[RMDB]
RNA sequence: GGGAACGACUCGAGUAGAGUCGAAAAGAGCGCAGGAUGCGUCGCGGGUGUGCGGCGUCGUUUGGAAGUACCGAUGGGUGACCAUCCGCAUCCAGGCGUCAUCAACGGACUGUGAGGGCAGCAGGAAACCAUACUGAGGAUUCGUCCUCAGUAUGGUAAAAGAAACAACAACAACAAC
Reactivity to DMS in 0.01 (KOAc 150mM, MgCl2 10mM, bicine 150mM(pH8.5), 24C), signal-to-noise 7, nucleotides 027 to 126: g010a090g020c040g010c050a100g020g010a060u000g020c030g020u000c050g030c070g010g000g030u000g020u010g010c050g000g000c050g010u000c030g020u000u000u000g010g010a070a060g030u000a080c170c100g010a030u000g000g000g000u020g010a210c020c020a030u000c010c100g000c080a050u000c020c010a070g010g000c040g020u000c050a080u000c080a090a100c100g000g000a090c060u000g010u010g000a110g000g000g000c050a090g010c060a060g000g000a120a130
Reactivity to 2A3 in 0.01 (KOAc 150mM, MgCl2 10mM, bicine 150mM(pH8.5), 24C), signal-to-noise 3, nucleotides 027 to 126: g060a010g010c060g000c060a030g020g100a050u060g020c020g040u030c030g000c030g010g060g070u120g030u050g030c030g000g000c020g010u010c020g010u030u090u090g070g020a090a040g050u080a100c040c030g040a050u030g030g020g040u080g050a040c010c000a020u010c000c020g010c020a020u020c000c000a020g030g000c010g030u060c020a060u060c010a030a090c060g010g060a040c030u020g030u040g080a070g010g040g010c000a020g000c010a010g090g000a100a090
This 177-nucleotide RNA was probed chemically with DMS and 2A3. For 2A3 the reverse transcriptase was SuperScript II with manganese. The reactions ran in a buffer of 150 mM KOAc, 10 mM MgCl2 and 150 mM bicine (pH 8.5), at 24 C. The data come from the RNA Mapping Database (RMDB), library OK2TST.